[RMDB]
An RNA of 177 nucleotides, treated with DMS and 2A3 and read out base by base. For DMS, 849 sequencing reads were counted. Reactivities are given for positions 27 through 126. Conditions: 150 mM KOAc, 10 mM MgCl2 and 150 mM bicine (pH 8.5), 24 C.

RNA sequence: GGGAACGACUCGAGUAGAGUCGAAAACCGGACCUGGCAUCAUGCCUUCUUGGGGGCUUUCGGCCUCUAAGCCGCCUUAUUCCGGGAUCGCGGACCGCGAUCCGACAAUGGAAGGACCGUCUCCCGACGCUUAAAGUGAGUUCGCUCACUUUAAGCGAAAAGAAACAACAACAACAAC
Reactivity to DMS in 0.01 (KOAc 150mM, MgCl2 10mM, bicine 150mM(pH8.5), 24C), signal-to-noise 1, nucleotides 027 to 126: c100c000g000g020a060c080c070u020g000g000c020a140u010c160a150u020g000c030c020u000u010c030u000u000g020g010g000g030g000c020u010u000u000c210g000g030c050c020u000c050u010a010a030g010c300c110g030c030c010u000u000a090u000u010c050c060g020g000g000a010u000c000g000c040g030g000a140c300c120g000c030g000a010u000c020c010g020a110c100a100a120u000g030g010a060a090g020g000a130c010c000g010u010c050u000c020c000c030g030a110
Reactivity to 2A3 in 0.01 (KOAc 150mM, MgCl2 10mM, bicine 150mM(pH8.5), 24C), signal-to-noise 2, nucleotides 027 to 126: c010c010g000g030a030c000c050u020g010g010c030a060u080c010a040u300g020c040c000u010u000c000u010u050g000g010g000g020g040c000u150u180u240c140g060g000c000c000u000c000u000a010a010g000c010c030g040c020c030u120u080a120u170u010c020c010g030g010g000a000u010c000g000c010g090g220a200c060c180g000c010g020a000u010c000c000g040a050c060a070a190u160g000g000a020a040g020g000a010c010c000g010u020c020u000c030c010c020g010a030

Source: RMDB library RFMREP, as collected in RNAgym.